[RMDB]
The record gives the reactivity of an RNA of 177 nucleotides to DMS. The DMS profile rests on 783 reads. Source: RMDB library OK2TST, as collected in RNAgym. DMS adducts were read by reverse transcription with MarathonRT. Conditions: 150 mM KOAc, 10 mM MgCl2 and 150 mM bicine (pH 8.5), 24 C.

RNA sequence: GGGAACGACUCGAGUAGAGUCGAAAAGUGUACCAGGAUGCAGCCUGCACCAUCCCCCUUCCUCCAGGUGACACGGAUGAGUUCUACCUCAAGGCGACAGGGCCGAACGAGGCCUGGAACACCGACGCUAUGGUGAGCGUUUCGACGCUCACCAUAGAAAAGAAACAACAACAACAAC
Reactivity to DMS in 0.01 (KOAc 150mM, MgCl2 10mM, bicine 150mM(pH8.5), 24C), signal-to-noise 1, nucleotides 027 to 126: g080u010g020u000a090c090c010a070g010g010a120u010g050c080a070g000c010c010u000g010c030a030c080c030a250u010c000c020c010c030c000u000u000c020c040u000c030c030a130g010g030u000g030a100c110a040c010g020g000a060u000g010a230g010u000u000c040u000a110c000c050u000c010a120a130g000g000c020g040a140c180a160g030g000g010c030c010g000a050a110c220g020a070g070g010c040c060u000g000g020a100a060c000a040c010c120g020a070c230g040